[RMDB]
RNA sequence: GGGAACGACUCGAGUAGAGUCGAAAAAAAAGAUAUGGAGAUGAACUACGGAAAUUACAAGGAUGAUGACCAGAGCUCGGAAACGAGCUCUGCAAGUCUUGUAAAUCCGCAUCUCCUAAGUCAAAAACCAUAGUUAUCUGUUCGCAGAUAACUAUGGAAAAGAAACAACAACAACAAC
Reactivity to 2A3 in 0.01 (KOAc 150mM, MgCl2 10mM, bicine 150mM(pH8.5), 24C), signal-to-noise 2, nucleotides 027 to 126: a000a000a000a010g040a020u060a020u080g000g000a000g000a010u010g010a160a080c150u250a070c300g000g040a050a170a240u280u030a010c010a070a000g170g060a140u210g060a130u080g030a080c050c000a000g000a000g000c000u000c000g020g050a040a060a040c000g020a010g000c010u000c000u000g000c010a050a030g010u000c000u010u010g010u030a050a110a080u040c000c000g040c000a000u000c000u030c000c000u020a090a000g020u050c010a000a040a040a130a140
Reactivity to DMS in 0.01 (KOAc 150mM, MgCl2 10mM, bicine 150mM(pH8.5), 24C), signal-to-noise 3, nucleotides 027 to 126: a060a070a120a090g000a020u020a160u000g000g000a030g000a010u000g000a140a080c150u000a300c020g000g000a040a040a100u010u000a000c010a050a010g000g000a120u000g010a080u010g010a300c300c000a000g010a010g010c000u010c010g010g000a080a020a050c010g000a000g000c000u000c000u000g000c020a010a040g040u000c000u000u000g000u000a000a020a120u000c000c010g000c000a010u000c010u000c000c010u010a000a050g000u020c000a020a110a080a090a090